Structure probing data (DMS and 2A3) for a 207-nucleotide construct.

RNA sequence: GGGAACGACUCGAGUAGAGUCGAAAAGCUGUGUGAGGCUGCAUGUGUGCCCCGUGCCUCUCUCCUCCUCUAACUGGUCAUCUCUAGACAUCCUCACUCUGUAAGUCCUGGGUCAGAUGCCAUCUCUUCUGGCUCUUCCUGGGCUUCCAAAGCCUGGCAUCUACGAAUAAUUCGUUAUUCGUAGAUGAAAAGAAACAACAACAACAAC
Reactivity to DMS in 0.01 (KOAc 150mM, MgCl2 10mM, bicine 150mM(pH8.5), 24C), signal-to-noise 2, nucleotides 027 to 156: g010c040u010g020u000g040u010g010a080g030g070c040u000g030c050a080u020g030u010g040u000g030c030c010c040c040g040u000g010c030c010u000c010u000c030u000c030c030u000c020c030u000c040u000a090a120c050u010g030g000u000c010a070u010c030u000c020u000a120g010a120c050a100u000c020c020u010c010a070c010u000c020u000g030u010a070a110g010u000c010c020u000g020g000g020u000c060a050g020a080u000g000c040c100a110u010c090u010c060u000u000c040u000g020g050c000u000c020u000u000c030c010u000g020g010g030c020u000u000c080c070a080a110a090g020c000c020u000g010g020
Reactivity to 2A3 in 0.01 (KOAc 150mM, MgCl2 10mM, bicine 150mM(pH8.5), 24C), signal-to-noise 5, nucleotides 027 to 156: g030c040u040g000u020g020u020g090a020g040g010c040u040g030c050a090u120g070u040g050u070g080c000c010c000c020g050u060g010c010c010u040c020u020c030u030c020c020u030c030c010u030c020u040a080a060c040u050g000g030u050c030a080u020c050u000c020u100a050g020a090c020a040u030c000c000u020c010a040c010u060c020u040g050u050a050a010g030u050c000c020u020g010g000g000u010c020a010g010a030u070g070c040c030a160u060c080u020c010u150u020c010u020g010g000c000u000c010u020u030c000c000u020g010g010g000c010u050u010c020c030a040a050a010g000c000c010u020g020g000
For 2A3, 6,403 sequencing reads were counted. The data come from the RNA Mapping Database (RMDB), library OK3TST. The reactions ran in a buffer of 150 mM KOAc, 10 mM MgCl2 and 150 mM bicine (pH 8.5), at 24 C.